[RMDB]
RNA sequence: GGGAACGACUCGAGUAGAGUCGAAAAUCAAUUUAAGAUGAUCCAAGGAAUACACACUGUAUGGGUUGCACUCUUUGAAGUCAAUAGGAAAAAGAGACUAUCAGUCAGCAGUAAGGGAAUAGGAAUAUCUACCAAACAUGUUCGCAUGUUUGGUAGAAAAAGAAACAACAACAACAAC
Reactivity to 2A3 in 0.01 (KOAc 150mM, MgCl2 10mM, bicine 150mM(pH8.5), 24C), signal-to-noise 2, nucleotides 027 to 126: u010c000a040a040u090u140u290a140a090g040a100u060g000a020u000c020c030a010a020g150g030a080a060u140a080c030a010c010a000c060u010g020u100a080u090g070g000g050u050u030g000c090a050c030u040c000u010u020u120g070a040a010g070u030c040a090a180u100a240g020g070a090a080a030a020a000g070a010g040a090c030u030a050u160c010a040g080u000c020a030g030c020a000g030u030a010a040g070g020g040a050a060u030a180g010g080a080a030u110a050
Reactivity to DMS in 0.01 (KOAc 150mM, MgCl2 10mM, bicine 150mM(pH8.5), 24C), signal-to-noise 3, nucleotides 027 to 126: u000c050a060a120u000u010u000a130a090g000a100u020g000a090u000c020c030a110a080g000g000a070a050u010a070c100a090c070a040c070u010g020u000a070u000g010g000g010u020u000g030c170a070c040u000c040u000u000u010g010a100a090g020u000c120a050a100u010a100g020g000a040a050a030a040a060g000a090g020a080c060u000a070u000c060a090g000u000c030a080g000c030a020g000u010a040a080g000g010g020a050a080u000a030g010g010a050a070u000a100